[RMDB]
RNA sequence: GGGAACGACUCGAGUAGAGUCGAAAAGACGUGUUCGCACGUCCGAUAGAUAUGGAGGACGUUGUCAGUUCGGUACAUCAAUGAUGUCGGAAACGAUUGAGAUGCGGCCGAACUUGGAUUUACGUCCUCCUAAGUCCGAUCCUCUCUUCGGAGAGAAUCUAAUUGGAAACUUCGGUUUCCAAUUAGAAAAAGAAACAACAACAACAAC
Reactivity to 2A3 in 0.01 (KOAc 150mM, MgCl2 10mM, bicine 150mM(pH8.5), 24C), signal-to-noise 4, nucleotides 027 to 156: g010a000c010g000u030g050u090u140c280g040c120a000c000g000u010c020c000g100a080u170a150g080a020u090a060u220g010g000a020g000g000a000c000g000u010u020g010u000c000a010g000u000u000c000g000g000u030a030c000a010u020c010a080a280u200g070a060u140g050u010c020g040g020a080a070a080c020g020a020u010u090g030a030g000a030u020g020c160g230g000c060c020g010a000a000c000u010u090g070g010a010u210u150u140a010c000g000u000c000c010u000c000c000u000a010a000g000u000c000c000g020a070u050c010c000u000c000u000c000u040u100c170g050g000a000g000a000g000a010a020
Reactivity to DMS in 0.01 (KOAc 150mM, MgCl2 10mM, bicine 150mM(pH8.5), 24C), signal-to-noise 2, nucleotides 027 to 156: g000a020c010g040u000g010u000u010c300g060c020a010c010g000u000c000c000g000a180u010a050g000a110u000a280u000g020g000a060g020g020a060c020g030u010u000g000u010c010a110g010u000u000c000g000g010u000a070c000a010u010c010a100a100u000g020a070u000g000u000c010g000g010a230a110a300c000g000a040u000u010g000a010g040a020u000g020c020g010g000c000c000g000a000a000c010u000u000g020g010a040u000u000u000a010c000g000u000c000c000u000c000c000u000a010a100g000u010c030c000g020a130u010c020c010u000c010u000c030u000u000c280g040g010a060g000a060g010a110a070

An RNA of 207 nucleotides, treated with 2A3 and DMS and read out base by base. The data come from the RNA Mapping Database (RMDB), library RNAMAK. The RNA was probed in 150 mM KOAc, 10 mM MgCl2 and 150 mM bicine (pH 8.5) at 24 C. For DMS the reverse transcriptase was MarathonRT.